Source: RMDB library 15KLIB, as collected in RNAgym.
The record gives the reactivity of an RNA of 170 nucleotides to 2A3 and DMS.
The RNA was probed in 150 mM KOAc, 10 mM MgCl2 and 150 mM bicine (pH 8.5) at 24 C.
For 2A3 the reverse transcriptase was SuperScript II with manganese.
For 2A3, 2,197 sequencing reads were counted.
[RMDB]
RNA sequence: GGGAACGACUCGAGUAGAGUCGAAAAUAGACAACCAGGACCUUAAUGGCAAGUGGUAUGAUUUUGGUGACUUCGUAAUCACUCAACCUGGUUCAGGAGUAGCUAUAGUUGAUAGCUACUAUUCUUACAGCUAGCCCCUUCGGGGGCUAGAAAAGAAACAACAACAACAAC
Reactivity to 2A3 in 0.01 (KOAc 150mM, MgCl2 10mM, bicine 150mM(pH8.5), 24C), signal-to-noise 2, nucleotides 027 to 129: u110a000g080a040c010a040a040c000c050a080g000g000a100c000c080u250u250a200a020u170g060g000c050a080a000g000u030g020g040u010a120u040g060a020u000u010u040u040g170g000u190g150a000c000u000u000c000g040u010a060a110u080c000a000c000u020c000a000a040c000c000u000g020g000u000u020c060a070g030g000a000g020u000a000g010c000u040a040u010a110g190u090u110g120a010u030a000g010c000u010a000c000u000a040u010u030c010u000u090a010c000a000g030
Reactivity to DMS in 0.01 (KOAc 150mM, MgCl2 10mM, bicine 150mM(pH8.5), 24C), signal-to-noise 3, nucleotides 027 to 129: u100a080g000a130c180a080a060c000c020a040g010g010a230c060c050u000u060a220a060u000g010g020c270a100a030g000u020g040g020u010a150u050g000a000u020u000u000u070g000g050u000g010a070c000u000u030c000g000u030a080a050u040c050a040c010u040c130a120a210c050c030u020g000g000u040u000c220a060g060g000a030g050u120a000g000c000u050a000u000a180g060u100u070g000a160u020a010g000c000u000a000c000u010a040u030u000c010u000u000a170c140a080g030